[RMDB]
RNA sequence: GGGAACGACUCGAGUAGAGUCGAAAAUUUUCAGCUCCCAUCCCGCUUCUUUCAGCAAGGCAAAUGCUUCGCGCAUUUGGGUGCGAAUUCGUCCGCUGCCAUCGGUCACAGAAGGCUGAUAAGUUUAGACUAUCGGAUAGUUCGCUAUCCGAUAGUCAAAAGAAACAACAACAACAAC
Reactivity to 2A3 in 0.01 (KOAc 150mM, MgCl2 10mM, bicine 150mM(pH8.5), 24C), signal-to-noise 1, nucleotides 027 to 126: u020u000u010u040c020a020g020c010u010c000c000c000a050u020c020c000c000g010c010u060u020c010u050u130u070c060a030g000c030a070a050g090g000c010a000a010a050u060g000c010u070u140c120g040c020g000c100a030u060u010u060g090g000g000u060g030c000g040a040a070u100u060c040g040u000c010c010g040c030u010g040c010c000a040u040c020g020g010u010c000a000c010a060g200a170a010g130g000c000u000g030a030u030a150a000g010u070u060u070a020
Reactivity to DMS in 0.01 (KOAc 150mM, MgCl2 10mM, bicine 150mM(pH8.5), 24C), signal-to-noise 2, nucleotides 027 to 126: u000u000u030u020c080a110g000c030u000c010c000c010a210u000c040c030c030g000c040u020u000c010u000u000u000c100a090g020c060a110a090g010g000c010a010a020a030u000g000c050u010u000c210g010c180g040c000a030u000u000u000g020g030g040u000g020c020g000a050a150u000u010c080g010u000c030c030g000c080u000g020c040c050a070u000c040g030g000u010c080a110c070a120g000a110a060g010g020c050u000g010a040u000a060a070g000u000u010u010a140